[RMDB]
RNA sequence: GGGAACGACUCGAGUAGAGUCGAAAAGAUCACCUGUUCGCAGGUGAUCAAUCUCCCACUUGAUCGAAGUCUCACAGCCUCCUUGCCCACGAGGCACGGGCGUAUUGAUCCGCUUCGGCGGAUCAAAGACUAUGUUCGUCUUCGGACGAACAUAGUCAAAAGAAACAACAACAACAAC
Reactivity to 2A3 in 0.01 (KOAc 150mM, MgCl2 10mM, bicine 150mM(pH8.5), 24C), signal-to-noise 1, nucleotides 027 to 126: g000a000u000c000a000c020c020u000g010u060u100c240g030c080a000g000g010u020g000a000u000c000a000a000u000c010u000c000c020c010a070c050u050u220g080a100u140c060g070a120a040g110u070c030u010c040a100c060a020g040c030c010u000c000c040u030u090g010c010c000c020a110c080g020a190g010g050c000a000c000g010g000g000c010g000u030a030u030u050g000a000u000c000c000g000c020u030u060c210g120g000c020g000g020a010u000c010a000a000a000
Reactivity to DMS in 0.01 (KOAc 150mM, MgCl2 10mM, bicine 150mM(pH8.5), 24C), signal-to-noise 2, nucleotides 027 to 126: g000a030u010c000a010c000c000u000g010u000u000c150g040c010a000g020g030u000g000a000u000c000a030a060u020c160u010c020c000c010a070c180u020u000g000a050u000c060g000a060a090g020u010c010u020c060a170c140a140g010c010c020u000c010c030u000u000g000c010c000c010a080c300g010a160g000g030c000a030c260g000g000g020c060g000u010a040u000u000g000a010u030c000c000g020c000u000u000c180g000g040c000g000g000a010u000c000a010a060a080